[RMDB]
RNA sequence: GGGAACGACUCGAGUAGAGUCGAAAAUGGGCGAUCGGUCGCUGUUUUUGUGGCUGGCUUUCAGCGGGCUGGAGGAGCCGGGAGCGGAGGCGGAGGACCGAGCCAAAAACGUCAGCCGAGGCCGGGCAAUAUCGUGGACUGUUCGCAGUCCACGAAACUCUAGGCUAUGGUUCGCCAUAGCCUAGAGAAAAGAAACAACAACAACAAC
Reactivity to 2A3 in 0.01 (KOAc 150mM, MgCl2 10mM, bicine 150mM(pH8.5), 24C), signal-to-noise 1, nucleotides 027 to 156: u070g050g000g010c050g100a120u020c030g020g050u020c010g010c090u020g120u030u110u060u040u100g060u100g080g140c040u020g000g040c030u090u090u060c040a000g000c090g000g080g010c030u120g040g060a070g010g020a010g050c050c000g020g010g000a070g010c070g000g030a010g010g040c010g000g030a040g010g020a010c000c010g000a010g020c040c000a000a170a000a000a000c100g030u050c030a010g000c020c030g010a030g010g030c100c010g000g020g000c060a050a090u130a060u240c000g000u000g000g000a010c000u000g020u020u030c220g000c100a010g010u000c000c000a000c000g000a000a000a000
The record gives the reactivity of an RNA of 207 nucleotides to 2A3. The reactions ran in a buffer of 150 mM KOAc, 10 mM MgCl2 and 150 mM bicine (pH 8.5), at 24 C. Source: RMDB library M2RFPK, as collected in RNAgym.